The data come from the RNA Mapping Database (RMDB), library ARCHII. An RNA of 207 nucleotides, treated with DMS and 2A3 and read out base by base. The reactions ran in a buffer of 150 mM KOAc, 10 mM MgCl2 and 150 mM bicine (pH 8.5), at 24 C. Values are in units of 0.01, from 0 to 300, in steps of 10. DMS adducts were read by reverse transcription with MarathonRT. For 2A3 the reverse transcriptase was SuperScript II with manganese. The DMS profile rests on 2,346 reads.
RNA sequence: GGGAACGACUCGAGUAGAGUCGAAAAUACGUUGGGAAUUUUGGCCGAGGAACAAAUCCUUCCUCGCGGCCAGACACGGACUGCACGCCCUUUGGGCAAGGGAUGGUUCUCCAUCUCGCACCGUGCCCUGUUGUGGCAACCGUCUUUUCUCCGUCGCGCAUUAGCUAUACUUCGGUAUAGCUAAUGCAAAAGAAACAACAACAACAAC
Reactivity to DMS in 0.01 (KOAc 150mM, MgCl2 10mM, bicine 150mM(pH8.5), 24C), signal-to-noise 1, nucleotides 027 to 156: u020a020c040g030u010u020g000g030g000a050a100u010u010u000u010g070g110c010c040g020a030g000g040a020a300c040a140a120a150u020c140c250u000u000c010c000u000c030g010c040g050g100c000c000a090g020a000c070a040c000g030g000a130c030u000g000c040a170c190g000c000c000c020u000u000u020g030g090g060c020a170a250g010g020g000a050u000g000g020u000u000c270u000c040c010a020u000c010u070c000g000c050a080c000c000g020u000g000c010c000c030u010g000u000u000g000u000g020g000c000a160a040c040c000g020u000c020u000u000u000u000c060u000c050c010g020u000c080g040c210
Reactivity to 2A3 in 0.01 (KOAc 150mM, MgCl2 10mM, bicine 150mM(pH8.5), 24C), signal-to-noise 1, nucleotides 027 to 156: u160a020c060g040u050u130g080g020g040a200a190u100u070u080u080g000g000c020c000g010a000g010g000a010a080c090a160a160a170u130c010c000u000u030c000c010u050c010g080c080g030g030c000c010a010g010a010c040a000c010g040g020a040c060u060g020c050a040c130g000c040c020c020u160u190u150g000g000g000c020a040a020g000g010g000a000u000g050g010u250u120c150u000c120c010a010u010c010u000c080g040c030a040c000c050g050u030g070c000c040c010u090g050u130u050g000u120g050g000c020a000a070c020c030g060u010c030u050u060u040u000c040u000c040c080g080u130c030g030c050